[RMDB]
Record summary:
An RNA of 177 nucleotides, treated with DMS and 2A3 and read out base by base. The data come from the RNA Mapping Database (RMDB), library OK1LIB. Conditions: 150 mM KOAc, 10 mM MgCl2 and 150 mM bicine (pH 8.5), 24 C. Reactivities are given for positions 27 through 126.
RNA sequence: GGGAACGACUCGAGUAGAGUCGAAAAGUUGUCACUAUCAUUUUGGAAGACGAGUUUGAUGAUGCUGCCAUUUGCGACCCAAAUGUUAGGGCUGUCUUGUUAACUAGAGCUCGUAAGGGUGGUAUGAAUUGCUGACCUCAUUCGUGAGGUCAGCAAUAAAAGAAACAACAACAACAAC
Reactivity to DMS in 0.01 (KOAc 150mM, MgCl2 10mM, bicine 150mM(pH8.5), 24C), signal-to-noise 1, nucleotides 027 to 126: g070u000u000g030u010c090a080c230u020a000u010c060a000u030u080u000u000g000g030a200a100g000a080c020g020a050g040u000u000u070g000a160u030g010a030u000g000c060u000g000c010c000a000u000u020u000g040c090g000a140c040c060c040a060a060a030u010g000u000u040a120g020g000g000c010u000g000u060c020u000u000g020u010u000a140a080c100u000a160g000a130g000c060u000c000g010u000a130a100g040g030g000u000g020g040u000a000u000g010a200
Reactivity to 2A3 in 0.01 (KOAc 150mM, MgCl2 10mM, bicine 150mM(pH8.5), 24C), signal-to-noise 1, nucleotides 027 to 126: g050u080u030g110u140c040a090c100u070a070u090c090a180u020u050u080u110g000g050a040a110g170a000c000g000a010g030u000u180u150g100a110u020g000a010u030g000c000u210g190c020c000a000u010u140u030g010c060g000a000c000c000c000a070a070a000u160g020u060u130a030g020g000g000c000u080g030u060c020u260u300g110u020u050a000a000c050u100a010g000a010g070c000u000c050g060u050a000a020g050g030g000u050g060g000u000a060u200g030a070